[RMDB]
RNA sequence: GGGAACGACUCGAGUAGAGUCGAAAAACGAGGCCCUGCCUACUACGGUAGGCACGGCCUCGAAUUACGUUCAUCUACUUAAUCGUAGACGCAUCAAUACAUCAUUCAUGGAACGGGGGAUGGUGAAACUAGAAUCAAACGUUCGCGUUUGAUUCAACUACAUCAAUUACUUCGGUAAUUGAUGUAGAAAAGAAACAACAACAACAAC
Reactivity to 2A3 in 0.01 (KOAc 150mM, MgCl2 10mM, bicine 150mM(pH8.5), 24C), signal-to-noise 6, nucleotides 027 to 156: a000c010g000a000g000g000c000c000c020u000g000c040c000u000a010c000u010a030c240g120g000u000a000g000g000c000a000c000g010g000c000c010u000c000g000a000a000u040u070a010c000g000u000u000c000a010u000c010u000a010c010u050u160a100a040u190c050g000u000a000g020a030c010g010c010a090u160c080a070a130u110a240c010a010u010c000a010u000u020c010a010u050g070g000a010a000c000g010g000g000g010g000a000u000g000g050u010g020a090a020a010c100u120a100g000a010a000u000c000a000a000a000c000g020u070u060c280g010c010g080u000u020u000g000a000u000u000c000a010a000
Reactivity to DMS in 0.01 (KOAc 150mM, MgCl2 10mM, bicine 150mM(pH8.5), 24C), signal-to-noise 2, nucleotides 027 to 156: a190c020g010a030g030g030c010c010c030u000g030c010c010u000a030c010u000a120c300g050g030u000a000g010g020c030a010c080g000g010c010c000u010c000g010a010a030u010u000a110c040g000u000u000c010a260u000c020u000a020c000u010u000a120a160u000c300g020u010a050g010a030c050g010c060a100u010c070a050a130u000a080c020a040u000c030a060u000u000c010a060u020g010g000a060a080c050g010g020g010g040g030a070u000g010g040u000g030a080a060a090c080u010a150g020a060a020u010c000a000a020a010c010g020u000u010c300g020c010g000u000u000u000g000a010u010u000c000a050a160